Notes: An RNA of 177 nucleotides, treated with 2A3 and DMS and read out base by base. DMS adducts were read by reverse transcription with MarathonRT. It was measured as part of the RMDB library TTRDEL. Conditions: 150 mM KOAc, 10 mM MgCl2 and 150 mM bicine (pH 8.5), 24 C.

RNA sequence: GGGAACGACUCGAGUAGAGUCGAAAAGAUAUGGAGAUCAUGAAUCAGCGACGAAGUCGGAAACGACAGAGCUGUGGCAUGUAUCUCCUAAGUCAAAGUGAAGACACUGUUCGCAGUGUCUUCACAACUAACAGAACACGUUCGCGUGUUCUGUUAGAAAAGAAACAACAACAACAAC
Reactivity to 2A3 in 0.01 (KOAc 150mM, MgCl2 10mM, bicine 150mM(pH8.5), 24C), signal-to-noise 3, nucleotides 027 to 126: g040a040u060a040u180g010g010a010g000a000u000c010a000u020g090a100a070u080c010a000g000c010g300a300c060g040a300a010g020u010c010g020g050a070a060a050c010g010a010c010a000g010a010g000c010u010g010u090g060g070c020a000u030g080u170a030u000c000u010c000c000u010a090a010g030u010c050a120a130a020g010u000g000a000a000g010a000c000a000c000u020g030u080u110c300g020c150a010g000u020g000u010c000u000u000c000a000c000a000a000
Reactivity to DMS in 0.01 (KOAc 150mM, MgCl2 10mM, bicine 150mM(pH8.5), 24C), signal-to-noise 4, nucleotides 027 to 126: g000a050u000a300u010g000g010a010g010a040u000c010a000u000g020a080a080u000c010a010g010c000g000a220c220g000a080a100g010u000c010g010g010a120a090a210c010g030a020c010a020g000a140g010c000u000g010u000g010g020c010a000u010g010u000a010u000c000u000c000c000u000a010a070g000u000c050a070a080a190g000u000g010a010a000g010a000c000a010c010u010g000u000u010c240g030c010a000g000u000g000u000c010u010u000c000a000c000a060a150